An RNA of 207 nucleotides, treated with DMS and 2A3 and read out base by base.
Source: RMDB library OK3TST, as collected in RNAgym.
For DMS the reverse transcriptase was MarathonRT.
For 2A3 the reverse transcriptase was SuperScript II with manganese.
The DMS profile rests on 4,979 reads.
RNA sequence: GGGAACGACUCGAGUAGAGUCGAAAAUGUACGAGCCGCGGCACGGCAGGUCGCUGGUCUCCGUAAACUCGUUCGCUGAAAUGUCGGCCAUAUUUAGUUCCUCCGCGUGGCUCGCGAAGGCGGGCGAUUUUCGGUCCUUCGUGCUGACGAAGCUCCAUAUGUUUGGUAUGUUCGCAUACCAAACAUAAAAAGAAACAACAACAACAAC
Reactivity to DMS in 0.01 (KOAc 150mM, MgCl2 10mM, bicine 150mM(pH8.5), 24C), signal-to-noise 2, nucleotides 027 to 156: u010g040u010a070c050g010a070g020c000c000g000c020g010g030c050a130c030g000g010c070a080g010g010u000c050g030c090u000g050g000u000c020u000c000c030g020u010a060a030a030c070u000c030g030u000u000c010g000c010u010g000a100a060a280u010g010u000c070g020g000c000c020a080u010a120u000u000u010a160g020u000u000c060c020u000c090c100g020c130g020u000g020g020c020u000c030g050c020g020a170a300g000g000c040g030g030g000c020g010a020u000u000u000u000c040g020g000u010c020c040u000u000c010g030u000g020c080u010g000a130c040g010a060a050g020c000u000c010c010a220
Reactivity to 2A3 in 0.01 (KOAc 150mM, MgCl2 10mM, bicine 150mM(pH8.5), 24C), signal-to-noise 3, nucleotides 027 to 156: u150g040u050a050c060g000a000g010c000c000g010c010g000g010c010a000c010g000g000c030a020g030g040u100c060g070c240u170g060g090u050c040u010c070c010g030u070a020a030a030c100u000c010g030u010u010c010g020c000u020g040a090a090a100u210g060u220c040g010g000c000c000a020u060a110u130u220u150a060g050u050u100c020c060u100c070c070g080c050g020u010g010g040c080u140c170g000c000g020a020a010g000g020c000g000g000g000c000g000a010u020u010u010u020c000g000g000u040c000c000u010u000c000g010u010g000c010u010g050a110c010g030a090a010g000c020u010c010c000a030